[RMDB]
RNA sequence: GGGAACGACUCGAGUAGAGUCGAAAAGAUAUGGACGAGCUCAAGGGAGAACCAUCCGUCGUUGAAAGAGAUCGGAAACGAUCUCUGGAGACGAGAAGUUCGAAGAACUUGAGCUCGUCCUAAGUCAGUAGAUCUUAGUCUUCGGACUAAGAUCUACAAAAGAAACAACAACAACAAC
Reactivity to DMS in 0.01 (KOAc 150mM, MgCl2 10mM, bicine 150mM(pH8.5), 24C), signal-to-noise 1, nucleotides 027 to 126: g020a100u000a300u020g010g020a010c040g010a010g020c020u000c000a030a010g010g020g010a100g000a110a020c020c100a090u010c210c110g050u000c000g000u010u010g000a300a180a000g000a000g050a050u000c000g000g000a060a070a120c020g020a000u000c000u000c000u010g000g000a300g000a020c000g030a070g000a110a210g000u000u000c000g010a160a030g010a200a040c000u000u000g000a010g010c000u020c000g010u000c000c000u020a000a110g020u020c050a140
Source information: This 177-nucleotide RNA was probed chemically with DMS. For DMS the reverse transcriptase was MarathonRT. Source: RMDB library TTRINS, as collected in RNAgym. For DMS, 832 sequencing reads were counted.